This 177-nucleotide RNA was probed chemically with 2A3 and DMS. DMS adducts were read by reverse transcription with MarathonRT. The RNA was probed in 150 mM KOAc, 10 mM MgCl2 and 150 mM bicine (pH 8.5) at 24 C.
RNA sequence: GGGAACGACUCGAGUAGAGUCGAAAAGAUAUGGACUUGGACCUGUGAACUACGGUUAGAUUCGGAAACGAAUCAACCGCACAGCUAGUCCUAAGUCAAAACAAAACGCCGUUCGCGGCGUUUUGAACUGUAUGUUCAGGUUCGCCUGAACAUACAGAAAAGAAACAACAACAACAAC
Reactivity to 2A3 in 0.01 (KOAc 150mM, MgCl2 10mM, bicine 150mM(pH8.5), 24C), signal-to-noise 3, nucleotides 027 to 126: g090a020u220a140u290g050g000a000c000u020u030g010g050a100c040c020u030g000u010g020a170a180c160u180a040c300g000g040u030u050a120g010a000u000u000c020g020g000a080a050a070c010g000a000a010u000c000a000a020c000c000g100c000a000c000a000g000c060u110a030g000u040c010c000u000a040a010g000u000c020a030a090a020a100c020a000a020a010a000c000g020c030c000g060u080u100c300g030c030g200g000c010g000u020u000u000u000g000a010a000
Reactivity to DMS in 0.01 (KOAc 150mM, MgCl2 10mM, bicine 150mM(pH8.5), 24C), signal-to-noise 2, nucleotides 027 to 126: g010a140u010a110u010g020g000a000c010u000u000g000g010a060c090c000u000g000u000g000a050a090c100u010a300c040g010g000u000u020a100g020a000u000u000c000g000g010a090a060a250c000g010a000a000u000c020a000a000c000c000g020c000a000c000a080g000c120u000a050g000u000c000c000u000a010a030g000u010c010a060a080a130a180c000a000a020a010a010c000g030c000c020g010u010u020c230g040c000g030g010c010g010u010u000u010u000g010a040a140